[RMDB]
RNA sequence: GGGAACGACUCGAGUAGAGUCGAAAAGAUAUGGAUUCUGCUGGACACCCGUUGAAAUCGGAAACGAUGGAGGGUGGACAGUUUCGAGAAUCCUAAGUCAAAAGAUGCCGUGUUCGCACGGCAUCAAUCAAUUUGGGUUGUUCGCAACCCAAAUUGAAAAAGAAACAACAACAACAAC
Reactivity to DMS in 0.01 (KOAc 150mM, MgCl2 10mM, bicine 150mM(pH8.5), 24C), signal-to-noise 2, nucleotides 027 to 126: g000a050u000a300u000g000g000a020u000u000c000u000g040c030u010g020g000a080c000a010c000c000c010g040u000u000g070a060a110a020u000c000g010g000a110a140a200c010g000a000u000g000g010a090g000g020g050u000g010g000a040c000a010g000u000u010u000c180g010a010g000a020a010u000c000c020u000a020a100g020u030c010a080a070a110a130g000a000u000g000c020c000g000u000g000u000u030c230g000c020a010c010g000g010c000a000u000c000a040a070
Chemical mapping of a 177-nucleotide RNA with DMS. It was measured as part of the RMDB library TTRDEL. For DMS the reverse transcriptase was MarathonRT. For DMS, 1,118 sequencing reads were counted.